[RMDB]
RNA sequence: GGGAACGACUCGAGUAGAGUCGAAAAGACUCCUUUAGAAGAAGAGGCUAGGGGGUAUUCCGGUGUGGGAUACUUAGUAAUAUGCAACGCUAAUUGCAUAAGAUUGUAGGACGGAAUUUACAGUCUUUAGAGAUAAGCACGUUCGCGUGCUUAUCAAGUGCAUUGUCAGGUUCGCCUGACAAUGCACAAAAGAAACAACAACAACAAC
Reactivity to 2A3 in 0.01 (KOAc 150mM, MgCl2 10mM, bicine 150mM(pH8.5), 24C), signal-to-noise 1, nucleotides 027 to 156: g060a000c040u000c020c010u060u130u080a040g030a150a000g000a030a020g010a030g000g000c000u030a020g000g000g000g020g050u010a070u020u020c010c030g120g050u170g040u160g030g020g010a020u020a110c020u050u040a020g010u040a030a160u020a030u090g000c010a000a010c010g050c260u160a110a000u080u010g000c000a000u000a030a030g050a020u000u000g030u030a000g000g080a010c050g060g050a050a050u100u070u040a040c030a020g000u000c000u040u060u100a140g020a010g000a080u000a000a000g030c000a000c000g000u090u020c160g030c030g100u000g020c010u000u000a000u020c010a010a010
Structure probing data (2A3) for a 207-nucleotide construct. Values are in units of 0.01, from 0 to 300, in steps of 10. For 2A3, 753 sequencing reads were counted. For 2A3 the reverse transcriptase was SuperScript II with manganese. Values cover nucleotides 27 to 156. Source: RMDB library M2RFPK, as collected in RNAgym. The reactions ran in a buffer of 150 mM KOAc, 10 mM MgCl2 and 150 mM bicine (pH 8.5), at 24 C.